An RNA of 177 nucleotides, treated with DMS and 2A3 and read out base by base.
DMS adducts were read by reverse transcription with MarathonRT.
The RNA was probed in 150 mM KOAc, 10 mM MgCl2 and 150 mM bicine (pH 8.5) at 24 C.
RNA sequence: GGGAACGACUCGAGUAGAGUCGAAAAGAUAUGGAUGAUAUUGACAUGUCGUUUCGGAAACGAACGACAACAGCAAUGAUCAUCCUAAGUCAAAAGCUCUGACUUACCUUCGGGUAAGUCAGAGCAACUCAGUAUCACUGUUCGCAGUGAUACUGAGAAAAGAAACAACAACAACAAC
Reactivity to DMS in 0.01 (KOAc 150mM, MgCl2 10mM, bicine 150mM(pH8.5), 24C), signal-to-noise 4, nucleotides 027 to 126: g000a040u010a270u000g000g000a010u000g010a010u000a020u000u000g000a060c090a210u000g010u000c000g010u000u000u000c000g030g010a040a050a130c010g000a010a010c010g000a000c000a020a060c280a180g000c010a020a000u000g000a030u010c000a010u000c000c000u010a030a060g000u010c020a080a100a100a090g010c000u000c000u000g000a020c000u000u010a000c010c000u010u010c220g020g010g020u000a010a010g010u000c000a000g000a000g010c000a000a010
Reactivity to 2A3 in 0.01 (KOAc 150mM, MgCl2 10mM, bicine 150mM(pH8.5), 24C), signal-to-noise 3, nucleotides 027 to 126: g030a020u050a020u130g010g010a010u010g000a000u010a010u050u060g040a140c070a100u050g010u010c000g020u090u260u160c000g010g010a030a050a040c030g010a000a000c000g110a010c010a010a050c060a030g100c000a010a030u270g070a070u130c000a000u000c000c000u010a070a010g060u020c040a000a000a080a130g000c010u000c000u000g000a000c000u000u000a010c000c000u030u080c300g030g000g000u000a000a000g000u000c000a000g000a000g000c000a000a000